[RMDB]
This 177-nucleotide RNA was probed chemically with 2A3.
2A3 adducts were read by reverse transcription with SuperScript II with manganese.
Source: RMDB library OK1LIB, as collected in RNAgym.
RNA sequence: GGGAACGACUCGAGUAGAGUCGAAAAACCACUUGUCGGAAUGAAGAUACGAAAGAGAAAUCUUUAUUGGACCACUUUUUCUUUCGCUAGAGGUCCUACCUAGCGUAUUGCACCCAAGUGAUUAUUGAGCACGUAGUCGCUUCGGCGACUACGUGCUAAAAGAAACAACAACAACAAC
Reactivity to 2A3 in 0.01 (KOAc 150mM, MgCl2 10mM, bicine 150mM(pH8.5), 24C), signal-to-noise 1, nucleotides 027 to 126: a000c000c000a050c000u090u000g170u180c010g020g100a120a060u030g010a000a070g000a080u110a040c080g230a110a260a000g070a000g000a110a200a100u020c000u000u110u000a130u060u090g000g000a000c000c000a000c000u000u020u000u300u120c010u050u080u150c060g040c060u070a020g030a010g020g000u000c000c020u000a020c000c000u000a000g010c000g090u070a070u000u120g000c000a000c000c000c000a040a000g030u000g120a040u000u100a150u050u300g090